This 177-nucleotide RNA was probed chemically with DMS. Conditions: 150 mM KOAc, 10 mM MgCl2 and 150 mM bicine (pH 8.5), 24 C. It was measured as part of the RMDB library RFMREP. For DMS the reverse transcriptase was MarathonRT. For DMS, 678 sequencing reads were counted.
RNA sequence: GGGAACGACUCGAGUAGAGUCGAAAAGAACAAGUAGCGUGAGCGAACGCUGAAAAGCACCCCACGAAGGGAGGUGCAAUAGGGCGUGAAAUCAGUUGGCGAUCGAACGACGGGGCAUACAAGGUCCGAUGUAUGGAGUCUUCGGACUCCAUACAUCAAAAGAAACAACAACAACAAC
Reactivity to DMS in 0.01 (KOAc 150mM, MgCl2 10mM, bicine 150mM(pH8.5), 24C), signal-to-noise 1, nucleotides 027 to 126: g000a110a080c090a060a170g000u010a090g040c030g000u020g000a190g020c010g010a100a010c050g020c020u060g020a020a080a100a110g000c000a040c000c000c000c020a140c150g000a110a120g030g000g010a090g060g020u000g020c000a040a020u010a090g000g000g000c000g010u000g000a050a110a090u010c050a030g000u000u010g000g000c050g000a070u000c090g020a100a100c090g000a030c070g010g000g010g030c020a080u000a020c090a040a130g020g000u000c070c100